Background: An RNA of 177 nucleotides, treated with DMS and read out base by base. Values cover nucleotides 27 to 126.

RNA sequence: GGGAACGACUCGAGUAGAGUCGAAAAAUGGAUUGUAGGCGCCGCCCUAUACCUUGUCUGCCUCCCCGCGGUGCAUGGAGCCGGGCCACCUCGACCUGAAUGGAAGCCGGCGGCACCUCGCUAACGGUCGGCUAUUCCUAUUCGUAGGAAUAGCCGAAAAAGAAACAACAACAACAAC
Reactivity to DMS in 0.01 (KOAc 150mM, MgCl2 10mM, bicine 150mM(pH8.5), 24C), signal-to-noise 1, nucleotides 027 to 126: a100u010g000g020a070u000u020g040u010a020g000g000c050g100c020c010g030c100c000c020u000a050u000a150c040c030u000u010g000u000c060u000g000c000c020u000c020c010c020c040g020c220g000g000u000g000c020a100u060g020g000a130g000c020c020g000g010g000c060c050a100c100c030u000c060g000a110c130c070u000g000a060a110u020g020g010a300a130g010c030c070g000g010c000g000g020c020a030c020c010u000c030g000c060u020a020a120c140g000g000